Structure probing data (DMS and 2A3) for a 207-nucleotide construct. DMS adducts were read by reverse transcription with MarathonRT. 2A3 adducts were read by reverse transcription with SuperScript II with manganese. The data come from the RNA Mapping Database (RMDB), library RNAMAK.
[RMDB]
RNA sequence: GGGAACGACUCGAGUAGAGUCGAAAAUCCUAAGUCCUGCGCAUGCCACGAUGAAAUACCAUCGAGGUAUGUCGGAAACGACAUACCUAAGACAGUGGUAUGGAGUGGCAUAUGCAGGAUAUGGAAAAACUUACGAGACCUUCGGGUCUCGUAAGAAUCCGUGAUAUAUGUUCGCAUAUAUCACGGAAAAAGAAACAACAACAACAAC
Reactivity to DMS in 0.01 (KOAc 150mM, MgCl2 10mM, bicine 150mM(pH8.5), 24C), signal-to-noise 1, nucleotides 027 to 156: u000c010c010u010a170a180g000u000c000c000u000g000c000g060c020a010u010g000c010c000a030c000g010a150u000g010a120a100a050u000a010c010c010a070u010c040g000a010g020g020u010a000u000g000u030c010g020g010a190a150a300c010g010a050c010a010u000a010c000c000u000a130a110g000a170c300a110g000u000g010g010u000a010u000g000g000a110g000u000g000g030c000a010u000a000u000g000c010a030g030g000a000u000a050u000g000g000a130a050a060a100a130c000u000u000a010c000g000a030g000a030c010c000u000u000c300g070g040g040u000c000u000c000g010u010a000a010g000a110a090
Reactivity to 2A3 in 0.01 (KOAc 150mM, MgCl2 10mM, bicine 150mM(pH8.5), 24C), signal-to-noise 2, nucleotides 027 to 156: u020c010c000u040a090a020g020u000c010c000u000g000c000g010c000a000u000g010c000c000a030c010g140a260u070g040a030a020a000u010a000c000c000a020u140c040g010a000g000g000u000a000u020g000u000c000g000g000a060a060a010c010g000a000c000a000u000a000c000c000u010a040a070g070a050c080a040g020u010g040g000u010a000u010g010g000a010g000u010g000g000c000a000u000a000u000g020c010a000g000g000a000u020a000u000g010g010a000a050a170a000a000c000u010u000a000c000g000a000g000a000c010c000u030u260c300g030g000g000u000c000u010c010g000u000a000a000g010a000a010